Background: An RNA of 177 nucleotides, treated with DMS and 2A3 and read out base by base. The data come from the RNA Mapping Database (RMDB), library OK2TST. DMS adducts were read by reverse transcription with MarathonRT. Values cover nucleotides 27 to 126. High DMS reactivity at an A or C suggests that its Watson-Crick edge is free. The DMS profile rests on 661 reads. The 2A3 profile rests on 663 reads. Conditions: 150 mM KOAc, 10 mM MgCl2 and 150 mM bicine (pH 8.5), 24 C.
[RMDB]
RNA sequence: GGGAACGACUCGAGUAGAGUCGAAAAGUUUGCAGAAGACAUGAUUGUGUAUCUAGAAAACCCCAUUGUCUCAGCCCAAAAUCUCCUUAGGCUGAUAGGCAACUUCAGCAAAGUCUCAGGAUACAAACGAGCAGUAAUCAUUCGUGAUUACUGCUCGAAAAGAAACAACAACAACAAC
Reactivity to DMS in 0.01 (KOAc 150mM, MgCl2 10mM, bicine 150mM(pH8.5), 24C), signal-to-noise 1, nucleotides 027 to 126: g010u010u000u000g070c040a040g040a020a080g020a130c170a130u020g010a050u020u000g000u000g020u010a060u000c010u000a130g010a060a060a140a240c000c000c000c030a300u000u000g000u010c020u000c030a040g040c000c000c060a050a060a100a030u020c120u000c080c020u000u020a050g000g000c000u010g030a060u000a000g000g000c000a020a030c060u000u000c020a090g000c040a060a030a060g000u000c020u000c060a130g050g000a040u020a050c170a030a130a120
Reactivity to 2A3 in 0.01 (KOAc 150mM, MgCl2 10mM, bicine 150mM(pH8.5), 24C), signal-to-noise 1, nucleotides 027 to 126: g030u000u110u070g000c000a010g020a100a000g000a040c050a070u050g060a230u230u050g100u020g020u190a020u000c040u060a070g220a100a100a040a060c030c010c000c020a010u000u090g000u000c020u000c030a010g000c000c000c060a060a110a030a140u100c050u060c070c030u000u000a030g010g000c000u040g020a160u100a050g050g010c030a080a080c000u140u080c010a010g010c000a030a040a120g090u000c050u080c100a000g000g000a070u070a200c100a100a070a030